[RMDB]
About this RNA
Chemical mapping of a 177-nucleotide RNA with 2A3 and DMS. The reactions ran in a buffer of 150 mM KOAc, 10 mM MgCl2 and 150 mM bicine (pH 8.5), at 24 C.

RNA sequence: GGGAACGACUCGAGUAGAGUCGAAAAAAUGGCAUGACACUGUGGGUAGAUGCUUUUGAGACUCUUGCAUUCUUUGGUAUCACAUCAGUUUUCUUUUACAGUGUGGCAAAAGAACCAAAAUACAGAGUGACGGUAGAAGAUUCGUCUUCUACCGUCAAAAAGAAACAACAACAACAAC
Reactivity to 2A3 in 0.01 (KOAc 150mM, MgCl2 10mM, bicine 150mM(pH8.5), 24C), signal-to-noise 1, nucleotides 027 to 126: a000a020u130g110g000c080a060u040g000a040c010a000c060u010g010u030g080g090g000u020a040g000a020u060g000c000u080u130u000u040g150a100g000a000c000u000c000u050u070g030c060a190u160u000c000u200u100u040g060g000u020a020u140c000a000c010a070u060c010a010g000u060u000u140u200c040u000u060u000u040a020c010a010g000u000g000u030g120g000c060a090a090a020a000g050a020a000c060c010a070a040a110a000u260a010c080a010g120a010g120
Reactivity to DMS in 0.01 (KOAc 150mM, MgCl2 10mM, bicine 150mM(pH8.5), 24C), signal-to-noise 3, nucleotides 027 to 126: a040a090u010g020g000c030a080u010g030a150c050a040c030u000g020u000g010g030g000u000a080g010a050u010g000c020u000u010u000u010g010a180g000a050c040u000c030u000u010g020c100a110u010u000c120u000u010u000g010g020u000a090u020c020a060c060a030u000c070a100g000u000u000u010u000c050u000u020u000u010a090c050a070g020u000g020u000g040g000c100a050a040a060a120g010a060a150c080c030a050a010a050a100u000a110c130a110g000a120g000
Source: RMDB library OK2TRN, as collected in RNAgym.